RNA sequence: GGGAACGACUCGAGUAGAGUCGAAAAGAUAUGGAAGCAUGAUGUGGGAGUCGCACUGGUCGGAAACGACCAAACGACGACGAUCACAUCCGCUGCUUCCUAAGUCAAACCGUCGUUCGCGACGGAACUAAAUUCACAUGUUCGCAUGUGAAUUUAGAAAAGAAACAACAACAACAAC
Reactivity to DMS in 0.01 (KOAc 150mM, MgCl2 10mM, bicine 150mM(pH8.5), 24C), signal-to-noise 8, nucleotides 027 to 126: g010a040u010a300u010g000g010a020a010g010c000a010u010g000a080u000g030u010g010g000g010a300g000u000c010g000c030a180c230u000g000g020u000c000g010g000a130a090a250c010g010a010c000c000a000a050a070c130g000a290c010g020a010c000g000a300u020c000a000c010a010u000c000c010g000c010u000g000c000u000u000c010c000u000a010a070g010u010c040a100a090a160c000c010g000u000c000g020u000u020c260g030c020g010a010c000g000g000a040a140
Reactivity to 2A3 in 0.01 (KOAc 150mM, MgCl2 10mM, bicine 150mM(pH8.5), 24C), signal-to-noise 6, nucleotides 027 to 126: g020a030u080a030u210g000g000a010a000g000c020a010u230g000a000u000g000u000g000g010g030a050g000u000c000g000c010a020c120u020g000g000u000c000g010g050a080a090a070c010g000a000c000c000a070a120a020c140g300a080c010g000a010c000g000a010u050c000a000c000a000u000c000c000g010c000u000g000c000u000u000c000c000u000a050a010g040u000c030a050a070a120c000c000g000u010c000g000u040u160c300g000c020g160a000c010g010g000a030a000
Conditions: 150 mM KOAc, 10 mM MgCl2 and 150 mM bicine (pH 8.5), 24 C.
An RNA of 177 nucleotides, treated with DMS and 2A3 and read out base by base.
It was measured as part of the RMDB library TTRDES.
2A3 is a SHAPE reagent: it acylates the 2'-hydroxyl of flexible nucleotides of all four kinds.
For 2A3, 33,042 sequencing reads were counted.
The DMS profile rests on 12,725 reads.